[RMDB]
Structure probing data (DMS and 2A3) for a 177-nucleotide construct. It was measured as part of the RMDB library OK2TST. The 2A3 profile rests on 1,069 reads. DMS adducts were read by reverse transcription with MarathonRT.
RNA sequence: GGGAACGACUCGAGUAGAGUCGAAAAGUGGCUCUUGGCCCAGGCCUAAACCAGGAAAGCCUGGGAAACUGGGACCCACAGGUGGGCAUGAAAGGGCCGCAGCAGGGGCUCCCAGCAGUGUGUAAGAUGAAUGAUAGUGUUUCGACACUAUCAUUCAAAAAGAAACAACAACAACAAC
Reactivity to DMS in 0.01 (KOAc 150mM, MgCl2 10mM, bicine 150mM(pH8.5), 24C), signal-to-noise 3, nucleotides 027 to 126: g000u010g010g010c020u000c010u000u010g010g000c010c020c010a090g010g010c030c030u000a070a090a180c040c020a070g000g010a220a220a220g010c010c010u000g010g000g000a020a040a080c040u000g000g000g020a100c070c010c010a080c110a090g010g020u000g020g000g000c050a060u000g020a100a100a140g000g010g000c020c030g030c050a070g020c090a110g000g020g000g000c130u000c010c010c000a070g010c090a060g010u010g010u000g000u000a080a120g000a150
Reactivity to 2A3 in 0.01 (KOAc 150mM, MgCl2 10mM, bicine 150mM(pH8.5), 24C), signal-to-noise 1, nucleotides 027 to 126: g040u020g000g010c020u020c020u090u090g080g010c030c000c000a030g000g020c000c020u040a170a070a050c040c010a000g090g000a300a120a010g180c000c000u000g010g030g020a050a000a000c010u020g040g000g020a040c030c030c010a090c010a040g050g120u050g050g020g010c050a050u150g190a240a100a000g060g000g000c030c070g000c040a030g040c010a000g060g020g030g030c070u000c080c010c000a020g000c040a040g050u140g010u060g000u140a060a030g070a200
The RNA was probed in 150 mM KOAc, 10 mM MgCl2 and 150 mM bicine (pH 8.5) at 24 C.